[RMDB]
RNA sequence: GGGAACGACUCGAGUAGAGUCGAAAACUGCCCUUUGUUUUCGCUGGCUUACAGAUUGACUGUGUUCAAUUAGUUCGUCUCUUAAUCUGGGGGUGAAUGUGAAAUUUGUUAGGGCGGAAAACAAACGCGAUAAGUUAACAUUCGUGUUAAUUUAUCGAAAAGAAACAACAACAACAAC
Reactivity to 2A3 in 0.01 (KOAc 150mM, MgCl2 10mM, bicine 150mM(pH8.5), 24C), signal-to-noise 5, nucleotides 027 to 126: c040u090g030c000c000c000u010u010u020g010u000u000u000u010c010g000c030u040g150g030c000u010u020a010c000a000g020a020u020u020g050a040c050u140g050u050g080u300u060c030a070a080u060u030a090g010u010u010c010g040u000c010u000c000u040u150a300a300u130c130u170g010g000g000g000g030u020g030a050a020u060g030u040g060a070a040a030u040u030u020g030u020u020a000g020g000g000c040g030g020a020a030a000a010c020a010a020a010c070g000
Reactivity to DMS in 0.01 (KOAc 150mM, MgCl2 10mM, bicine 150mM(pH8.5), 24C), signal-to-noise 7, nucleotides 027 to 126: c100u020g010c010c010c010u000u000u000g000u000u010u000u010c000g020c020u000g010g000c010u000u010a040c010a050g010a030u000u000g010a020c070u020g010u060g010u030u000c030a080a100u020u030a140g020u010u000c010g010u010c010u000c060u000u020a060a050u030c150u020g000g000g000g000g000u000g000a040a020u020g010u020g000a080a050a050u020u010u010g010u010u000a030g010g010g000c010g000g000a040a040a040a030c030a010a030a100c240g010
The data come from the RNA Mapping Database (RMDB), library OK1LIB. An RNA of 177 nucleotides, treated with 2A3 and DMS and read out base by base. 2A3 adducts were read by reverse transcription with SuperScript II with manganese. For DMS, 30,103 sequencing reads were counted. The reactions ran in a buffer of 150 mM KOAc, 10 mM MgCl2 and 150 mM bicine (pH 8.5), at 24 C. Reactivities are given for positions 27 through 126. DMS adducts were read by reverse transcription with MarathonRT.